[RMDB]
RNA sequence: GGGAACGACUCGAGUAGAGUCGAAAAGGUGGCAAUUUCUCAAAAAAAGGGGGACUGCCAAUGUUUUUGCUUGUUUGCUCUUUCCCUAGAAAGGAAUAGUAGUGACUGUCUUUGAAGCAUUGAUGCUAAGAGACAAAGAUUUCGAUCUUUGUCUCUUAAAAGAAACAACAACAACAAC
Reactivity to 2A3 in 0.01 (KOAc 150mM, MgCl2 10mM, bicine 150mM(pH8.5), 24C), signal-to-noise 1, nucleotides 027 to 126: g200g040u020g000g020c000a040a050u060u030u030c080u000c000a140a250a140a080a040a020a140g000g000g030g000g010a030c040u000g000c000c000a040a040u060g100u000u020u000u010u010g070c030u050u010g010u100u060u110g010c000u000c000u000u000u030c000c000c000u070a150g140a230a110a020g020g010a040a010u110a140g110u070a010g000u030g030a030c040u010g030u150c030u100u140u070g070a060a000g020c020a030u030u180g130a050u170g000c030u000
Reactivity to DMS in 0.01 (KOAc 150mM, MgCl2 10mM, bicine 150mM(pH8.5), 24C), signal-to-noise 3, nucleotides 027 to 126: g030g030u010g010g020c020a020a040u000u000u000c000u010c000a000a010a080a140a080a170a110g010g000g020g010g020a030c100u000g000c010c000a050a060u010g000u000u000u010u010u010g000c130u010u000g000u000u000u000g000c030u000c030u010u000u000c000c000c000u010a130g010a100a110a130g000g000a040a030u030a030g010u020a020g010u000g010a070c120u010g000u000c030u020u010u000g000a090a060g010c020a070u010u010g010a120u000g010c040u000
An RNA of 177 nucleotides, treated with 2A3 and DMS and read out base by base. The data come from the RNA Mapping Database (RMDB), libraries RFM100 and RFMREP. The RNA was probed in 150 mM KOAc, 10 mM MgCl2 and 150 mM bicine (pH 8.5) at 24 C. Reactivities are given for positions 27 through 126. The 2A3 profile rests on 614 reads.